Record summary: The record gives the reactivity of an RNA of 177 nucleotides to DMS and 2A3. Source: RMDB library OK2TRN, as collected in RNAgym.
[RMDB]
RNA sequence: GGGAACGACUCGAGUAGAGUCGAAAAGGCCAGCUCGAGUUCUUCGGGCGAUUGGACCACCAGAUCAAGUUGCGUGGCAACAGAAUCGAGCUCGGCGAGGUCGAGCACGCUAUCCGGCGCGACAGCGGCGCAAUAAGUCGUUCGCGACUUAUUGCGCAAAAGAAACAACAACAACAAC
Reactivity to DMS in 0.01 (KOAc 150mM, MgCl2 10mM, bicine 150mM(pH8.5), 24C), signal-to-noise 5, nucleotides 027 to 126: g010g020c010c070a200g010c000u000c000g020a040g010u020u000c080u000u000c020g010g010g030c010g010a070u010u000g010g020a140c020c040a230c040c020a100g020a080u010c150a100a140g000u000u000g000c070g030u000g020g010c060a050a060c070a080g000a050a060u010c020g000a080g020c010u000c030g010g000c040g000a090g020g010u000c010g010a050g010c020a070c090g010c060u000a070u000c020c030g020g010c040g010c010g000a050c100a100g000c160g010
Reactivity to 2A3 in 0.01 (KOAc 150mM, MgCl2 10mM, bicine 150mM(pH8.5), 24C), signal-to-noise 4, nucleotides 027 to 126: g020g000c020c010a020g030c010u000c010g060a110g220u240u060c010u070u010c010g000g000g020c070g060a090u060u190g080g040a130c010c000a000c020c020a040g010a110u170c140a160a070g110u080u050g040c070g040u080g070g000c040a080a040c030a140g090a020a050u090c030g030a010g010c010u010c010g010g000c050g050a080g000g080u000c010g000a010g000c020a010c030g030c000u030a060u140c020c030g050g010c030g000c010g020a010c020a040g100c050g120

For 2A3, 4,612 sequencing reads were counted. High DMS reactivity at an A or C suggests that its Watson-Crick edge is free.